[RMDB]
RNA sequence: GGGAACGACUCGAGUAGAGUCGAAAAGAUAUGGAGCUCCUAGGGAGAGAUGAGGUCGGAAACGACCUUCAUCUCGAGGAUCUAGAGAGCUCCUAAGUCAAAACCAAUUCGGUUCGCCGAAUUGGAACUUAUGUUUGUUGUUCGCAACAAACAUAAGAAAAGAAACAACAACAACAAC
Reactivity to 2A3 in 0.01 (KOAc 150mM, MgCl2 10mM, bicine 150mM(pH8.5), 24C), signal-to-noise 2, nucleotides 027 to 126: g010a010u040a050u090g000g000a010g000c010u000c000c010u000a000g020g020g000a110g010a000g010a010u020g000a010g020g000u010c000g040g000a030a020a010c010g000a000c000c040u050u080c010a000u000c000u000c000g000a020g000g000a000u000c000u000a010g110a050g000a000g300c000u000c000c000u000a000a000g000u000c010a000a030a060a090c000c000a000a010u010u000c020g060g090u060u110c300g030c120c000g000a000a000u000u020g000g000a010a020
Reactivity to DMS in 0.01 (KOAc 150mM, MgCl2 10mM, bicine 150mM(pH8.5), 24C), signal-to-noise 3, nucleotides 027 to 126: g000a030u000a220u010g010g000a020g020c000u000c000c000u000a020g000g010g010a010g000a020g020a000u000g010a030g000g010u000c000g020g000a030a050a090c000g000a020c000c000u010u020c090a010u000c000u000c000g010a100g020g000a010u010c010u000a010g010a260g000a010g020c000u000c000c000u000a010a050g000u010c020a170a120a160a250c010c000a010a010u000u000c000g010g010u000u000c290g020c000c000g000a010a010u000u000g010g020a030a090
Structure probing data (2A3 and DMS) for a 177-nucleotide construct. The RNA was probed in 150 mM KOAc, 10 mM MgCl2 and 150 mM bicine (pH 8.5) at 24 C. 2A3 adducts were read by reverse transcription with SuperScript II with manganese.